[RMDB]
RNA sequence: GGGAACGACUCGAGUAGAGUCGAAAAAAGUCACCCAAAACGAGAUCGUGGGGACGCCGCCGUUUGAGGAUCGAAACACUAAAUUGAAUCAAACUAGCUUAUUUCUUGCGUGUCUGUCCGCUGGAGGUAAGUGAAAUUAAAGACCAGACUAAACGUGCAUGACGAAAUCCUUCGGGAUUUCGUCAUGAAAAGAAACAACAACAACAAC
Reactivity to 2A3 in 0.01 (KOAc 150mM, MgCl2 10mM, bicine 150mM(pH8.5), 24C), signal-to-noise 1, nucleotides 027 to 156: a000a050g190u160c210a300c000c010c070a070a000a000a000c150g000a070g040a170u160c110g050u050g010g000g020g060a000c030g010c010c010g010c040c090g020u000u030u010g020a000g020g000a030u050c090g060a030a060a050c220a030c150u190a140a120a050u200u170g030a010a030u070c020a000a000a000c010u050a020g000c000u010u000a010u000u070u000c020u020u020g010c000g020u050g000u000c000u000g050u030c000c000g000c010u040g010g000a000g000g010u000a000a000g030u020g020a000a000a080u180u130a040a020a000g050a040c080c080a000g000a000c030u080a070a180a000c070g080u170g040
Structure probing data (2A3) for a 207-nucleotide construct.
The RNA was probed in 150 mM KOAc, 10 mM MgCl2 and 150 mM bicine (pH 8.5) at 24 C.
2A3 adducts were read by reverse transcription with SuperScript II with manganese.
Reactivities are given for positions 27 through 156.
The data come from the RNA Mapping Database (RMDB), library ARCHII.